[RMDB]
RNA sequence: GGGAACGACUCGAGUAGAGUCGAAAAGAUAUGGACCUACUGAUGCGUAGUGGCGUUGAAAUCGGAAACGAUGGAGCCAUCACGCGGAUGUAGGUCCUAAGUCAAAACAUAGCCUUCGGGCUAUGAACGUCUGUUGAAGGUUCGCCUUCAACAGACGAAAAGAAACAACAACAACAAC
Reactivity to DMS in 0.01 (KOAc 150mM, MgCl2 10mM, bicine 150mM(pH8.5), 24C), signal-to-noise 1, nucleotides 027 to 126: g040a060u000a300u000g020g000a010c000c010u000a010c000u000g000a300u020g000c000g060u000a040g040u000g010g000c000g020u000u000g000a040a170a020u020c000g000g000a110a130a190c000g020a020u010g000g000a070g000c010c000a000u000c060a000c000g020c000g000g000a150u000g010u000a010g070g010u000c010c010u000a010a060g000u020c000a050a130a090a150c000a010u000a000g000c000c000u000u010c160g010g000g040c000u000a000u000g000a060a200
Chemical mapping of a 177-nucleotide RNA with DMS. It was measured as part of the RMDB library TTRDEL. The RNA was probed in 150 mM KOAc, 10 mM MgCl2 and 150 mM bicine (pH 8.5) at 24 C.